Record summary:
Source: RMDB library M2PK90, as collected in RNAgym. Structure probing data (DMS and 2A3) for a 177-nucleotide construct.

[RMDB]
RNA sequence: GGGAACGACUCGAGUAGAGUCGAAAAUACAAGAAGGGGGGACGGAGAAGGCUAUGUUGGCCGGGCGACGGUUGUCCCGGUUUAAGCGUGUAGGCUGGUUUUCCAGGCAAAUCGGGAAGAAAAUGAACGAAUUUACAUUAUUCGUAAUGUAAAUUCGAAAAGAAACAACAACAACAAC
Reactivity to DMS in 0.01 (KOAc 150mM, MgCl2 10mM, bicine 150mM(pH8.5), 24C), signal-to-noise 6, nucleotides 027 to 126: u000a100c090a060a080g000a090a120g010g020g000g020g000g010a060c070g000g020a080g010a120a090g010g010c040u000a050u010g020u000u010g010g010c010c010g000g010g010c300g010a070c110g010g010u010u010g010u010c010c000c000g000g010u000u000u000a050a090g010c040g010u000g010u000a080g010g010c010u010g000g010u000u000u000u000c010c030a120g010g000c060a020a040a060u000c030g010g000g010a050a080g000a050a040a060a100u000g010a080a200
Reactivity to 2A3 in 0.01 (KOAc 150mM, MgCl2 10mM, bicine 150mM(pH8.5), 24C), signal-to-noise 2, nucleotides 027 to 126: u100a000c020a020a080g070a050a100g020g000g000g000g000g000a000c000g010g010a040g000a090a050g030g000c030u030a040u170g110u110u070g050g010c020c000g010g020g000c040g000a100c070g110g000u060u110g030u040c010c000c000g010g030u020u050u040a030a020g030c040g010u050g070u090a030g060g070c000u020g000g010u010u040u070u080c000c010a010g040g000c000a020a010a070u040c020g020g060g010a060a030g020a020a070a010a030u160g040a080a000
The RNA was probed in 150 mM KOAc, 10 mM MgCl2 and 150 mM bicine (pH 8.5) at 24 C.
The DMS profile rests on 7,248 reads.
For 2A3 the reverse transcriptase was SuperScript II with manganese.